[RMDB]
RNA sequence: GGGAACGACUCGAGUAGAGUCGAAAAGAAGUUACAUUUGAGCUUAUUAUAAACAACCUAAAAGAACCCGUUUGCUCAACAGGUAUCGGCAAUAAUAAGAAGGAAGCGAAACAAGACGCCGCACGAGUCCUUCUGACUAAACUAGGCGCAGACAAGAAUGUAACAAUUUUUUCGAAAAUUGUUACAUAAAAGAAACAACAACAACAAC
Reactivity to 2A3 in 0.01 (KOAc 150mM, MgCl2 10mM, bicine 150mM(pH8.5), 24C), signal-to-noise 2, nucleotides 027 to 156: g060a020a000g030u020u080a060c010a160u070u100u140g000a010g020c010u120u040a060u180u100a140u300a230a140a070c070a030a090c000c020u110a100a140a010a050g070a010a040c080c010c040g000u010u060u060g010c020u010c020a030a010c030a110g070g000u030a030u100c010g050g030c030a010a030u080a200a000u040a080a030g030a020a010g010g000a010a040g010c050g020a000a110a090c020a010a100g100a040c090g030c050c020g000c040a030c110g050a030g060u010c000c000u020u010c010u030g040a060c040u090a000a110a000c040u080a040g010g000c030g000c010a000g060a030c030a040a030g030a100
Reactivity to DMS in 0.01 (KOAc 150mM, MgCl2 10mM, bicine 150mM(pH8.5), 24C), signal-to-noise 1, nucleotides 027 to 156: g020a110a100g010u010u000a080c040a180u000u020u010g010a190g030c020u000u000a020u010u000a150u000a170a090a100c060a140a100c010c010u010a080a080a140a130g000a080a080c040c030c010g000u000u020u000g000c120u000c030a140a090c070a040g000g020u000a060u000c060g020g000c100a060a030u010a050a100u000a050a050g010a040a010g030g010a040a100g000c020g010a140a040a030c020a040a210g010a140c010g020c060c000g020c090a150c050g010a100g010u010c000c000u000u000c030u000g040a120c020u000a040a060a090c040u000a020g000g000c030g020c030a010g000a050c020a060a100g020a200
Chemical mapping of a 207-nucleotide RNA with 2A3 and DMS. Values are in units of 0.01, from 0 to 300, in steps of 10. The reactions ran in a buffer of 150 mM KOAc, 10 mM MgCl2 and 150 mM bicine (pH 8.5), at 24 C. For 2A3 the reverse transcriptase was SuperScript II with manganese.